Chemical mapping of a 207-nucleotide RNA with 2A3 and DMS.
High 2A3 reactivity points to a flexible backbone, as in loops and unpaired stretches.
The data come from the RNA Mapping Database (RMDB), library OK3TST.

[RMDB]
RNA sequence: GGGAACGACUCGAGUAGAGUCGAAAAUAUGUAUAUUAGCAUCAUCUAUGGUGGCGUUGAUUGGCGCCGGUGCGACAUCAGGAUGUAGCCAAAACAACACCUUUUCGCGAAAUAAACCGUAGAUAAUGCGCGUGAUGUAUUCCGGCGUAAAUCGUUGAUUCAUGCCCUUAUUCGUAAGGGCAUGAAUAAAAGAAACAACAACAACAAC
Reactivity to 2A3 in 0.01 (KOAc 150mM, MgCl2 10mM, bicine 150mM(pH8.5), 24C), signal-to-noise 2, nucleotides 027 to 156: u270a080u060g060u060a150u070a090u200u240a040g000c000a000u000c000a000u000c000u000a000u020g000g020u030g030g010c030g060u000u060g150a200u060u090g090g000c020g000c000c040g020g000u050g030c070g030a000c020a120u070c040a010g050g050a070u000g060u040a020g150c060c070a030a060a080a080c080a040a000c010a120c090c000u010u040u020u000c010g000c000g100a040a040a070u150a080a250a050c000c000g030u010a000g020a040u010a100a050u050g000c000g000c020g070u110g120a080u060g000u090a060u140u000c000c000g040g020c040g020u090a000a000a110u130c070g010u000u090g040
Reactivity to DMS in 0.01 (KOAc 150mM, MgCl2 10mM, bicine 150mM(pH8.5), 24C), signal-to-noise 1, nucleotides 027 to 156: u000a080u010g030u010a080u000a060u000u000a240g040c040a060u000c030a030u010c010u000a030u000g060g070u030g030g030c010g030u000u010g030a240u000u010g060g000c010g000c010c010g080g000u000g030c000g020a080c040a040u000c050a090g020g010a060u010g000u000a220g050c100c030a060a070a070a120c040a090a040c060a060c010c010u010u020u010u000c080g000c130g000a150a100a210u000a080a140a070c060c010g120u000a030g020a010u010a040a020u000g010c000g000c090g000u010g000a050u000g020u040a210u000u010c010c010g000g020c020g030u020a040a180a070u010c000g000u010u020g000